[RMDB]
RNA sequence: GGGAACGACUCGAGUAGAGUCGAAAACAGUUAUGUGCGUCCCUCCCGAAGCUGCGCGCUCGGUCGAAGAGGACGACGAUCGCCGAUAGAGGACGACCGGUCUUCGGUCAAGGGAAUAAGAGUAAAAUCAGAUACCCUCUUUCGAGAGGGUAUCUGAAAAAGAAACAACAACAACAAC
Reactivity to DMS in 0.01 (KOAc 150mM, MgCl2 10mM, bicine 150mM(pH8.5), 24C), signal-to-noise 1, nucleotides 027 to 126: c080a030g000u020u020a090u000g020u010g000c070g000u000c000c000c000u000c050c000c000g020a050a040g000c030u000g000c220g000c090g010c040u000c010g030g040u000c230g000a040a060g000a080g010g010a030c060g000a110c000g000a080u000c020g000c040c030g000a110u000a100g010a120g000g020a090c140g010a090c060c010g030g000u020c030u000u000c040g010g020u000c010a080a050g000g010g020a080a080u010a060a060g010a150g000u020a050a020a120a140
Reactivity to 2A3 in 0.01 (KOAc 150mM, MgCl2 10mM, bicine 150mM(pH8.5), 24C), signal-to-noise 1, nucleotides 027 to 126: c010a030g060u100u140a130u180g220u080g000c010g000u010c010c000c000u010c060c000c000g000a130a020g000c000u030g000c060g020c040g000c140u010c040g000g090u030c060g030a110a040g140a070g040g010a000c040g030a000c000g040a090u030c030g040c070c000g020a020u020a130g140a070g050g010a060c100g030a020c030c100g010g090u150c010u160u120c020g060g000u020c030a020a030g050g000g060a020a110u110a090a030g040a020g060u050a000a050a030a100

Annotation: The record gives the reactivity of an RNA of 177 nucleotides to DMS and 2A3. The DMS profile rests on 1,009 reads.